This 207-nucleotide RNA was probed chemically with 2A3. For 2A3, 544 sequencing reads were counted. The reactions ran in a buffer of 150 mM KOAc, 10 mM MgCl2 and 150 mM bicine (pH 8.5), at 24 C.
RNA sequence: GGGAACGACUCGAGUAGAGUCGAAAAGAAUUGGUAUGUAAGCUACUUCUUCCAGUAGCUGCGUCAUAACAACAAGGUUAUGCAUACUGAGCCGAAGCUCAGCUUCGGUCCUCCAAGGAAGACCAAAUACAGCUCAGCCCGUUCGCGGGCUGAGCAACCCUUGCUCAAGGUUCGCCUUGAGCAAGGGAAAAGAAACAACAACAACAAC
Reactivity to 2A3 in 0.01 (KOAc 150mM, MgCl2 10mM, bicine 150mM(pH8.5), 24C), signal-to-noise 1, nucleotides 027 to 156: g080a010a100u010u010g000g000u010a000u000g000u010a000a010g010c000u020a000c010u100u110c000u010u000c010c000a020g010u000a000g010c000u000g000c000g000u010c000a000u010a000a000c090a010a020c080a100a110g300g000u020u000a000u030g040c000a010u010a000c010u000g000a000g000c000c000g000a000a000g000c090u120c300a030g010c000u040u000c000g020g000u000c010c000u110c060c060a020a040g000g010a000a000g000a000c000c120a060a150a010u170a090c060a010g050c000u000c000a000g000c000c000c000g060u130u070c150g010c020g000g180g080c010u000g000a000g000c000a000a010